[RMDB]
RNA sequence: GGGAACGACUCGAGUAGAGUCGAAAAUCCUAAGUCACGAGGUCAAUCCCAUCGAUCACGCAUUGUCAGUAUAUUCGGAAACGAAUAUACUUGGAUUUAUGCGUGGGAGGGAUUGACUCGUGAUAUGGAAAAAUGACCUAGAUUCGUCUAGGUCAAACUCCAGUUAGAAGUUCGCUUCUAACUGGAGAAAAGAAACAACAACAACAAC
Reactivity to 2A3 in 0.01 (KOAc 150mM, MgCl2 10mM, bicine 150mM(pH8.5), 24C), signal-to-noise 6, nucleotides 027 to 156: u030c020c000u020a140a020g010u000c000a000c000g000a030g090g300u050c010a010a000u000c010c010c010a150u300c020g030a040u050c000a000c000g000c000a010u000u030g010u030c000a000g000u000a000u000a000u000u000c000g030g020a060a070a060c010g010a000a000u000a000u000a000c000u010u030g020g020a020u120u270u240a010u010g000c000g000u000g010g010g010a020g000g000g010a000u000u000g000a010c000u000c000g000u000g000a000u000a030u010g000g050a020a080a060a010a050u130g000a000c000c010u000a000g000a030u020u090c220g030u010c150u000a000g000g000u000c010a010a000a000
Reactivity to DMS in 0.01 (KOAc 150mM, MgCl2 10mM, bicine 150mM(pH8.5), 24C), signal-to-noise 2, nucleotides 027 to 156: u000c010c000u000a070a270g010u000c000a030c000g010a040g020g000u000c010a010a040u000c000c010c020a300u000c110g020a130u010c030a010c000g000c010a010u010u010g010u000c010a060g040u000a020u010a010u010u000c010g030g000a200a100a300c010g010a030a010u000a000u000a000c000u010u000g050g020a040u010u000u000a010u000g010c000g010u000g000g020g010a050g000g020g010a020u000u010g010a020c000u000c000g040u030g040a010u000a060u000g000g000a000a060a080a130a110u000g010a050c000c000u000a020g020a120u000u000c300g030u000c020u000a000g000g020u000c000a000a040a080